Overview
Chemical mapping of a 177-nucleotide RNA with 2A3 and DMS. For DMS the reverse transcriptase was MarathonRT. The DMS profile rests on 7,396 reads. In probing experiments dimethyl sulfate is read out at A N1 and C N3, which are open when not base-paired. Source: RMDB library OK2TST, as collected in RNAgym. The 2A3 profile rests on 2,616 reads.
[RMDB]
RNA sequence: GGGAACGACUCGAGUAGAGUCGAAAACGUACAUGGUCAUACUAGACGACUCAGAUGCAUCUUAUUUCGCACCUGCGGCAUACCCGAUGAUAUGGAGUUUUGCAAUGGGCUACGGGACAGCAGUUGAUCCUAACGAAAAGUUCGCUUUUCGUUAGGAAAAAGAAACAACAACAACAAC
Reactivity to 2A3 in 0.01 (KOAc 150mM, MgCl2 10mM, bicine 150mM(pH8.5), 24C), signal-to-noise 3, nucleotides 027 to 126: c030g020u080a020c010a090u090g020g000u050c020a030u040a140c050u070a110g050a100c040g020a010c020u020c080a040g020a100u090g010c010a030u010c030u070u170a150u140u130u070c020g000c020a050c030c010u030g030c030g030g000c030a040u030a080c000c010c050g040a080u080g020a010u000a060u120g100g030a080g020u080u100u150u070g030c000a040a060u080g030g050g000c020u050a020c010g000g030g030a020c020a010g000c010a020g060u090u030g040a080
Reactivity to DMS in 0.01 (KOAc 150mM, MgCl2 10mM, bicine 150mM(pH8.5), 24C), signal-to-noise 6, nucleotides 027 to 126: c110g010u010a090c100a060u000g010g020u010c020a080u020a100c110u010a090g010a130c080g010a080c040u000c020a060g000a090u000g010c020a070u000c100u010u000a120u010u000u000c080g020c040a060c050c050u000g020c190g010g000c050a070u000a070c100c030c040g010a080u010g000a080u000a090u010g000g000a090g010u000u000u000u010g020c080a050a080u000g010g000g010c040u000a060c080g000g010g000a060c070a040g010c060a070g000u010u000g010a160